[RMDB]
RNA sequence: GGGAACGACUCGAGUAGAGUCGAAAAUUUCUGGCACGUUGUGUCUUCACGCAGACAGAAGCUACCCAGGUAAUUCUGUUCCCGUAACGCUCAACGUCCAGAGCAGGUAAGCCAGGAGGCCGCCCUGAACACUCCUCAGAUUCGUCUGAGGAGUGUUAAAAGAAACAACAACAACAAC
Reactivity to DMS in 0.01 (KOAc 150mM, MgCl2 10mM, bicine 150mM(pH8.5), 24C), signal-to-noise 5, nucleotides 027 to 126: u010u030u000c000u000g000g000c160a020c010g010u000u000g000u000g020u010c130u000u000c300a010c000g000c270a190g020a010c020a000g000a040a010g000c140u010a040c040c060c140a140g000g030u010a010a030u010u000c000u000g000u010u030c070c300c010g020u000a030a090c300g000c030u000c000a010a020c030g000u010c020c010a000g010a060g020c090a020g040g000u000a160a070g020c010c020a140g030g010a110g030g030c020c090g000c150c010c010u000g000